Structure probing data (2A3 and DMS) for a 177-nucleotide construct. For 2A3, 1,606 sequencing reads were counted.
[RMDB]
RNA sequence: GGGAACGACUCGAGUAGAGUCGAAAACGGAUGCAAAAUAAGCGAGAAAAGGUAACAGCCGCAAAUGGUCACAAAAUAGUACAAUGGAGAGCAGAAGAUCGCAAAAACCACCAUAAAAAUUAAGCAACAACAUUUAGUUGUUCGCAACUAAAUGUUGAAAAGAAACAACAACAACAAC
Reactivity to 2A3 in 0.01 (KOAc 150mM, MgCl2 10mM, bicine 150mM(pH8.5), 24C), signal-to-noise 2, nucleotides 027 to 126: c020g000g060a050u030g030c000a000a000a010a300u130a140a060g000c000g050a040g030a070a060a010a020g040g000u040a090a060c010a020g030c010c030g050c040a000a030a170u130g000g030u090c010a000c000a030a140a000a010u050a030g070u060a010c010a010a020u060g040g020a110g000a000g060c020a000g020a090a000g000a060u050c050g000c080a000a000a070a000a150c030c010a010c020c010a060u200a020a160a000a010a030u160u060a090a030g000c010a000a030
Reactivity to DMS in 0.01 (KOAc 150mM, MgCl2 10mM, bicine 150mM(pH8.5), 24C), signal-to-noise 3, nucleotides 027 to 126: c080g010g020a070u010g000c070a070a010a090a070u000a070a100g020c040g020a090g010a100a050a100a080g000g020u000a050a070c060a060g000c070c070g010c080a040a100a050u000g000g010u000c040a060c100a050a040a080a070u010a110g000u000a040c100a040a070u000g010g030a060g000a060g010c040a030g010a050a050g000a050u010c050g000c070a020a040a070a100a050c080c050a050c050c030a060u030a030a030a030a040a060u010u020a020a100g010c080a060a130